[RMDB]
RNA sequence: GGGAACGACUCGAGUAGAGUCGAAAACAUCAUGGGGUCUCAGUUGCCUCUGGCUGGAGAAGUGGGUGGCCUGGGGAUUGGAGGGCCCAGGCCUGGCUGUGUGGGGUCCCUCCAGCUCACUGAGGCCAGGAGUAUCGUAUUUCGAUACGAUACUCCUAAAAGAAACAACAACAACAAC
Reactivity to 2A3 in 0.01 (KOAc 150mM, MgCl2 10mM, bicine 150mM(pH8.5), 24C), signal-to-noise 2, nucleotides 027 to 126: c010a080u240c050a140u210g100g060g000g000u020c010u000c030a050g030u080u100g070c020c020u010c100u090g020g030c000u010g080g000a050g020a170a070g060u150g060g070g050u060g020g000c010c000u000g000g010g000g040a040u030u180g060g000a040g000g030g030c000c000c000a000g010g000c000c000u010g040g000c040u020g040u040g060u120g180g090g040g030u080c040c000c030u010c000c000a000g000c030u030c030a030c020u020g000a010g000g020c030c010
Reactivity to DMS in 0.01 (KOAc 150mM, MgCl2 10mM, bicine 150mM(pH8.5), 24C), signal-to-noise 2, nucleotides 027 to 126: c080a090u020c100a080u010g020g020g020g010u000c020u000c030a030g000u010u010g010c110c040u010c070u010g010g010c000u010g010g010a070g010a130a150g030u010g000g020g010u020g000g000c010c000u000g000g000g000g010a150u010u010g000g000a040g010g010g010c010c010c000a030g010g000c010c010u000g000g020c070u010g030u010g010u010g010g010g020g000u010c060c040c000u000c000c010a030g020c110u000c130a020c030u000g010a040g020g000c020c060
This 177-nucleotide RNA was probed chemically with 2A3 and DMS.
Source: RMDB library OK2TRN, as collected in RNAgym.
The 2A3 profile rests on 3,484 reads.
Conditions: 150 mM KOAc, 10 mM MgCl2 and 150 mM bicine (pH 8.5), 24 C.